[RMDB]
RNA sequence: GGGAACGACUCGAGUAGAGUCGAAAAGAUAUGGAGAGGUGUGGGAGGGUGAAGGUCGGAAACGACCUUUCAACCCGAAGAACACACUCCCCACCUCCUAAGUCAAACGUGACGUUCGCGUCACGAACUACCAUAUUCCGUUCGCGGAAUAUGGUAGAAAAGAAACAACAACAACAAC
Reactivity to DMS in 0.01 (KOAc 150mM, MgCl2 10mM, bicine 150mM(pH8.5), 24C), signal-to-noise 3, nucleotides 027 to 126: g000a060u010a050u010g000g000a040g010a100g000g030u000g020u000g000g000g010a080g000g010g020u010g010a020a000g000g030u000c010g000g010a100a030a110c000g010a010c000c000u000u010u000c060a090a060c000c010c010g000a030a170g000a110a120c000a020c010a020c010u000c030c020c000c020a110c140c020u000c000c020u010a020a110g000u000c040a070a090a200c020g010u000g010a010c010g000u000u010c190g010c010g000u000c000a010c010g010a060a120
Reactivity to 2A3 in 0.01 (KOAc 150mM, MgCl2 10mM, bicine 150mM(pH8.5), 24C), signal-to-noise 3, nucleotides 027 to 126: g000a000u050a020u140g000g010a050g010a030g070g040u020g020u080g010g010g000a030g020g000g000u000g020a000a000g000g000u010c000g000g000a020a020a020c000g000a020c000c000u020u090u060c080a080a040c010c010c020g040a210a050g010a010a010c020a000c010a010c040u070c010c010c000c010a210c010c000u000c020c000u000a010a020g010u040c070a090a040a130c030g000u010g000a000c010g010u030u080c300g050c010g120u000c000a000c000g000a020a010
This 177-nucleotide RNA was probed chemically with DMS and 2A3. The DMS profile rests on 3,267 reads. The RNA was probed in 150 mM KOAc, 10 mM MgCl2 and 150 mM bicine (pH 8.5) at 24 C. For 2A3 the reverse transcriptase was SuperScript II with manganese.